This 207-nucleotide RNA was probed chemically with 2A3 and DMS. The RNA was probed in 150 mM KOAc, 10 mM MgCl2 and 150 mM bicine (pH 8.5) at 24 C. For DMS the reverse transcriptase was MarathonRT. For 2A3 the reverse transcriptase was SuperScript II with manganese. For 2A3, 902 sequencing reads were counted. The DMS profile rests on 4,380 reads.
[RMDB]
RNA sequence: GGGAACGACUCGAGUAGAGUCGAAAAUUGAUACUAAAGACAUAAUUGCUAGAGAACCGGGGUAUGAUGUUAGUUUGUUAGAUCCUAGGGUACAUAAAUGUAGUGGGGAUUCUAUUAUUGCAAUUUUGCCACACGUGAGGCCGGAAGUUUUACCUCAAGAGUCUAAAGGAUUCGUCCUUUAGACUCUAAAAGAAACAACAACAACAAC
Reactivity to 2A3 in 0.01 (KOAc 150mM, MgCl2 10mM, bicine 150mM(pH8.5), 24C), signal-to-noise 2, nucleotides 027 to 156: u060u030g010a000u080a200c040u160a180a050a030g050a010c010a010u160a010a060u130u060g000c010u060a010g000a000g010a030a040c070c090g070g060g000g000u100a090u140g050a040u030g010u070u040a100g010u020u110u110g040u050u020a010g030a130u050c010c000u040a010g000g040g000u010a110c010a070u170a030a130a020u080g000u020a030g040u020g000g030g000g000a010u070u030c030u110a090u240u060a060u100u020g020c000a000a030u020u030u060u120g030c040c000a070c020a010c090g020u020g040a000g000g020c040c010g020g000a010a010g010u040u090u200u110a030c000c020u090c040a010
Reactivity to DMS in 0.01 (KOAc 150mM, MgCl2 10mM, bicine 150mM(pH8.5), 24C), signal-to-noise 2, nucleotides 027 to 156: u010u000g020a180u000a200c040u000a090a050a130g020a090c020a060u000a070a100u010u000g010c020u020a110g010a100g000a070a150c100c100g000g020g000g020u000a040u000g030a070u000g020u000u000a080g030u000u000u010g030u000u000a090g010a080u000c030c030u000a120g010g000g040u010a060c080a080u010a050a070a070u010g030u000a060g020u000g020g040g020g060a080u000u010c060u000a060u000u000a120u010u010g010c090a060a140u000u020u000u000g030c020c000a070c070a060c060g050u000g000a040g000g040c020c050g020g010a040a100g000u000u010u000u000a110c000c000u000c020a120